The record gives the reactivity of an RNA of 177 nucleotides to DMS and 2A3. The RNA was probed in 150 mM KOAc, 10 mM MgCl2 and 150 mM bicine (pH 8.5) at 24 C. For DMS the reverse transcriptase was MarathonRT.
RNA sequence: GGGAACGACUCGAGUAGAGUCGAAAAGAUAUGGACCGCCCAUAUGGAGCGAGCAGAUCGGAAACGAUCUGGCUCGCUAUGAAGUAUGUAACAAGUCCUAAGUCAAACGGUAUGUUCGCAUACCGAACAACGCCAUAUUCUUCGGAAUAUGGCGUUGAAAAGAAACAACAACAACAAC
Reactivity to DMS in 0.01 (KOAc 150mM, MgCl2 10mM, bicine 150mM(pH8.5), 24C), signal-to-noise 3, nucleotides 027 to 126: g010a030u000a040u010g010g000a010c000c160g020c240c210c010a010u000a000u010g000g010a000g020c000g000a030g010c020a010g000a000u000c000g010g020a030a010a060c000g000a000u000c000u000g010g020c000u000c000g030c030u010a010u000g020a130a220g010u000a000u010g000u020a110a140c300a190a110g000u000c000c000u020a020a090g020u000c010a120a050a230c030g000g020u000a000u000g010u000u010c200g050c000a010u000a010c000c010g000a100a150
Reactivity to 2A3 in 0.01 (KOAc 150mM, MgCl2 10mM, bicine 150mM(pH8.5), 24C), signal-to-noise 1, nucleotides 027 to 126: g010a000u020a000u080g010g000a000c000c030g080c040c060c000a000u010a010u010g040g000a010g000c000g000a000g000c000a000g030a010u000c010g000g000a010a000a000c010g000a010u000c010u010g020g060c000u010c000g000c000u000a040u000g000a010a000g020u020a000u030g060u110a140a090c140a300a070g000u020c000c010u000a020a010g030u010c030a090a080a100c000g000g000u010a000u010g010u010u080c190g000c150a000u010a000c000c000g000a050a010